[RMDB]
RNA sequence: GGGAACGACUCGAGUAGAGUCGAAAAGAUAUGGAGAGUGGAGACAACAGCCACACCUGUCGGAAACGACAGUUGUGGACAUGUCUCGCUCCUAAGUCAAACCUCCGAUGGUUCGCCAUCGGAGGAACAGUGUACAAAACUUCGGUUUUGUACACUGAAAAGAAACAACAACAACAAC
Reactivity to DMS in 0.01 (KOAc 150mM, MgCl2 10mM, bicine 150mM(pH8.5), 24C), signal-to-noise 4, nucleotides 027 to 126: g010a050u000a290u000g000g010a050g000a020g010u010g030g010a020g030a020c010a050a100c300a140g000c000c000a010c000a010c060c000u000g000u010c010g010g000a120a090a160c000g010a010c010a000g010u000u000g010u000g000g000a020c100a080u000g000u000c010u000c000g000c000u000c000c000u010a050a210g010u010c020a090a100a210c010c000u000c000c010g010a010u000g000g010u000u020c260g000c000c000a000u000c000g000g000a000g000g010a010a030
Reactivity to 2A3 in 0.01 (KOAc 150mM, MgCl2 10mM, bicine 150mM(pH8.5), 24C), signal-to-noise 5, nucleotides 027 to 126: g020a010u100a050u200g050g010a080g010a030g230u300g150g050a000g020a000c010a140a020c050a100g110c000c000a000c000a000c000c000u000g000u000c000g010g010a070a060a030c010g010a000c000a010g000u000u000g000u000g000g020a040c000a030u080g000u000c000u010c000g000c000u000c000c000u070a170a050g060u030c050a070a050a220c000c010u000c000c000g000a000u010g000g080u060u100c300g070c120c000a010u000c000g000g000a000g000g000a010a000